[RMDB]
RNA sequence: GGGAACGACUCGAGUAGAGUCGAAAAAAUAUGCUCGACAGGCUGCCUGUCCGACAGAGCUUUUAGAUCUUCUGAUCAUUCCCUGCAGCAUAUCGCUUAUGCAUCAAGCGAUUGUCGGAUCACACAAUUAAAACUAGAAAUUCGUUUCUAGUUUUAAAAAAGAAACAACAACAACAAC
Reactivity to DMS in 0.01 (KOAc 150mM, MgCl2 10mM, bicine 150mM(pH8.5), 24C), signal-to-noise 7, nucleotides 027 to 126: a060a070u000a050u010g010c020u000c030g010a120c180a100g010g000c050u000g000c030c160u000g000u000c010c010g010a020c040a090g000a060g010c040u000u000u010u010a100g010a020u000c000u000u020c260u020g000a020u000c010a150u000u000c000c010c010u000g010c050a050g010c020a070u010a050u000c010g010c010u000u000a090u010g020c210a090u010c140a040a010g000c000g010a020u010u000g010u000c010g010g000a080u010c170a070c140a090c170a060a110
Reactivity to 2A3 in 0.01 (KOAc 150mM, MgCl2 10mM, bicine 150mM(pH8.5), 24C), signal-to-noise 3, nucleotides 027 to 126: a000a000u210a050u080g000c020u010c010g050a030c030a050g050g070c020u020g030c010c030u090g060u000c000c010g010a000c020a040g020a000g030c000u010u090u020u060a020g000a010u010c010u230u060c140u300g010a010u030c020a020u010u020c000c000c010u030g050c010a020g000c010a020u020a000u130c000g020c020u020u030a070u200g190c050a100u140c110a050a000g010c000g020a010u010u030g000u020c000g020g040a080u090c040a040c000a000c000a110a090